Conditions: 150 mM KOAc, 10 mM MgCl2 and 150 mM bicine (pH 8.5), 24 C. An RNA of 207 nucleotides, treated with DMS and 2A3 and read out base by base. For 2A3 the reverse transcriptase was SuperScript II with manganese. DMS adducts were read by reverse transcription with MarathonRT. The 2A3 profile rests on 1,984 reads.
RNA sequence: GGGAACGACUCGAGUAGAGUCGAAAAUUCGGCCUUAUAAGCAUCGGCUAUACUUUUUACAUAUUCACGAAAUCUAGCAAUAAUCGCCAAGUCAUCAUCGGAUUGAAUAUUGCCUGCCAACAUUUCGCGCAAUCUUUGCGCAUUUUCGAUAAAUUCAACUUAAGAGUGUCUUCGGACACUCUUAAGUAAAAGAAACAACAACAACAAC
Reactivity to DMS in 0.01 (KOAc 150mM, MgCl2 10mM, bicine 150mM(pH8.5), 24C), signal-to-noise 2, nucleotides 027 to 156: u010u000c120g030g010c030c020u000u020a150u000a140a120g040c020a230u000c010g010g000c020u000a150u000a050c020u000u000u040u000u000a060c090a130u000a080u000u000c050a110c000g010a130a070a060u000c040u000a040g000c000a080a070u000a110a080u000c090g030c050c020a000a100g010u000c110a080u010c110a090u000c070g010g000a050u000u010g020a060a150u020a040u020u000g040c020c000u000g000c130c020a070a030c080a100u000u030u000c060g050c020g020c040a050a050u010c130u010u000u000g020c030g040c000a050u000u000u010u000c020g020a090u000a050a070a140u010u000c030a050
Reactivity to 2A3 in 0.01 (KOAc 150mM, MgCl2 10mM, bicine 150mM(pH8.5), 24C), signal-to-noise 4, nucleotides 027 to 156: u150u080c090g030g020c020c010u160u120a130u090a240a040g010c060a030u090c040g010g020c010u060a030u020a070c020u050u100u040u080u170a060c050a080u180a040u080u170c050a020c110g060a070a020a100u060c090u040a060g000c020a030a030u020a130a050u040c040g010c050c000a050a020g090u060c030a040u040c020a040u040c160g050g020a030u040u140g060a060a020u060a010u050u080g020c000c000u030g010c020c000a070a030c040a130u080u180u090c020g000c000g000c000a010a090u120c120u110u100u050g000c000g000c010a010u000u010u020u070c030g020a000u090a070a050a080u240u290c010a020